[RMDB]
RNA sequence: GGGAACGACUCGAGUAGAGUCGAAAAGGCUGGGUAGAUGGUCCUAAAGUGGUGGUUUUCAAGCCUGAGUGUGUAUCAGGAUCAUCAGGGGAGCUUGCUAAAGAGCAGUUCCUGCGGUCAGACCCUCGCUGCCUCAUACAUUCGUGUAUGAGGCAGCAAAAGAAACAACAACAACAAC
Reactivity to DMS in 0.01 (KOAc 150mM, MgCl2 10mM, bicine 150mM(pH8.5), 24C), signal-to-noise 1, nucleotides 027 to 126: g000g000c030u000g000g050g000u000a020g030a020u000g010g010u000c010c000u000a060a080a100g000u000g010g030u020g090g000u000u000u000u000c210a120a300g020c020c010u010g000a180g010u010g020u000g000u000a080u000c270a050g000g000a010u000c000a020u000c030a050g000g000g060g010a030g000c020u000u020g050c000u000a100a100a190g000a110g010c010a070g010u000u000c000c000u000g020c100g000g000u000c030a050g000a140c040c010c020u020c240
Reactivity to 2A3 in 0.01 (KOAc 150mM, MgCl2 10mM, bicine 150mM(pH8.5), 24C), signal-to-noise 2, nucleotides 027 to 126: g020g000c010u010g000g000g140u070a060g030a010u020g000g000u000c030c020u130a130a130a070g120u110g040g000u110g000g080u060u090u130u110c140a080a030g030c030c000u020g020a070g080u300g000u030g020u080a140u270c060a000g010g000a000u000c000a000u010c010a020g000g020g000g010a050g020c050u120u130g000c010u240a300a250a110g270a150g090c030a010g010u000u000c000c000u020g000c000g020g000u000c010a030g020a180c000c020c000u020c040